[RMDB]
RNA sequence: GGGAACGACUCGAGUAGAGUCGAAAAGAUAUGGAUCCCUUGCUUCAUCGAUCUACUGGUCGGAAACGACCAGGUAGGGAGAAGUACAUGAGGGAUCCUAAGUCAAAGUUGUGGUUCGCCACAACAAGUUCGAUGUAACCUUCGGGUUACAUCGAACAAAAGAAACAACAACAACAAC
Reactivity to DMS in 0.01 (KOAc 150mM, MgCl2 10mM, bicine 150mM(pH8.5), 24C), signal-to-noise 1, nucleotides 027 to 126: g000a140u000a300u000g000g030a050u000c000c000c010u000u000g050c060u000u000c000a300u000c090g020a160u000c000u000a020c000u000g000g020u000c010g010g000a090a110a260c000g000a030c000c020a020g010g060u000a010g000g000g000a130g030a050a000g040u000a090c300a140u020g000a020g000g030g000a030u010c000c000u000a030a120g010u000c090a050a020a150g000u040u000g030u000g000g000u020u000c300g030c010c000a000c000a050a040c000a180a170
Reactivity to 2A3 in 0.01 (KOAc 150mM, MgCl2 10mM, bicine 150mM(pH8.5), 24C), signal-to-noise 1, nucleotides 027 to 126: g050a020u070a050u160g050g020a000u010c000c010c000u000u040g000c010u050u020c000a300u300c040g130a070u020c020u030a010c020u010g000g020u010c000g000g000a030a030a060c000g000a000c000c000a020g000g030u020a000g000g050g010a030g000a000a000g020u030a100c130a270u300g040a070g000g000g000a000u030c000c000u000a100a010g050u000c170a170a070a040g000u000u010g000u010g040g120u000u130c300g080c120c000a000c010a000a000c000a000a000